[RMDB]
RNA sequence: GGGAACGACUCGAGUAGAGUCGAAAAGAAAGCGUGUGGUCGUAUGACCGGCCAAAUGCGACGCUGCGAUGCAGUCUUGCGCGCGAAAGUCCUUGAUGCUGGUAGGCCGGUUAUAGCAUCGGACGAAGGCCGGGCGCGACUUCGGUUGCGUUUGGCCAAAAGAAACAACAACAACAAC
Reactivity to 2A3 in 0.01 (KOAc 150mM, MgCl2 10mM, bicine 150mM(pH8.5), 24C), signal-to-noise 9, nucleotides 027 to 126: g110a020a050a000g020c010g000u060g030u040g070g020u020c010g010u040a040u090g060a070c010c000g000g000c000c000a050a100a050u090g010c010g000a010c010g010c010u020g000c050g130a120u300g010c010a010g020u050c040u200u250g020c030g000c000g000c010g070a120a040a010g010u010c010c010u060u280g010a010u020g000c020u060g050g090u060a060g020g000c000c000g000g010u030u060a120u040a010g000c000a000u000c010g000g010a010c020g020a140a060
Reactivity to DMS in 0.01 (KOAc 150mM, MgCl2 10mM, bicine 150mM(pH8.5), 24C), signal-to-noise 9, nucleotides 027 to 126: g010a090a080a120g000c010g010u000g020u000g000g010u000c010g010u010a050u010g000a070c010c000g000g000c000c010a080a110a070u010g000c010g000a020c040g010c020u010g000c010g010a150u040g010c010a010g010u020c140u030u040g010c020g000c010g010c030g010a090a090a150g000u000c010c010u030u040g020a020u000g020c010u000g000g020u020a090g010g010c000c000g000g000u010u010a050u030a020g010c010a010u000c000g000g000a030c030g010a120a100
The record gives the reactivity of an RNA of 177 nucleotides to 2A3 and DMS. For DMS, 172,095 sequencing reads were counted. The RNA was probed in 150 mM KOAc, 10 mM MgCl2 and 150 mM bicine (pH 8.5) at 24 C.